Chemical mapping of a 170-nucleotide RNA with DMS and 2A3. It was measured as part of the RMDB library 15KLIB. The RNA was probed in 150 mM KOAc, 10 mM MgCl2 and 150 mM bicine (pH 8.5) at 24 C.
[RMDB]
RNA sequence: GGGAACGACUCGAGUAGAGUCGAAAACAAGAAGAGCAGAGAGAAGGCAAGAAUCGGACGAUUUCCCCAUGACGCUGGAGACAUCCUGGAAGGGGAAAGAGGAGGGUGGAAGAAAAAGGGGUGGGCCAUACAGGUGUGUUCGCACACCUGAAAAGAAACAACAACAACAAC
Reactivity to DMS in 0.01 (KOAc 150mM, MgCl2 10mM, bicine 150mM(pH8.5), 24C), signal-to-noise 4, nucleotides 027 to 129: c080a000a000g040a010a030g010a050g040c020a080g050a090g070a060g030a130a000g010g050c120a050a060g010a040a090u040c060g000g000a120c150g010a040u030u000u040c010c010c030c080a080u050g020a100c230g070c090u000g060g010a050g030a100c200a060u010c000c050u000g030g040a000a000g090g000g010g000a020a020a040g020a120g040g050a110g000g000g080u040g000g000a050a040g030a010a070a030a050a080g020g020g030g000u070g030g000g040c120c050a000u080a120
Reactivity to 2A3 in 0.01 (KOAc 150mM, MgCl2 10mM, bicine 150mM(pH8.5), 24C), signal-to-noise 5, nucleotides 027 to 129: c040a000a000g030a020a000g020a010g020c060a010g060a000g030a010g020a150a000g040g010c040a000a030g030a050a030u090c050g020g030a010c010g050a050u010u030u060c020c010c020c020a070u100g030a050c100g030c070u020g000g000a010g020a040c040a070u020c000c030u040g020g040a050a020g000g000g010g000a020a030a000g050a020g050g010a030g020g010g030u160g040g030a090a050g050a030a090a020a010a020g060g010g000g060u240g020g020g020c010c000a020u110a090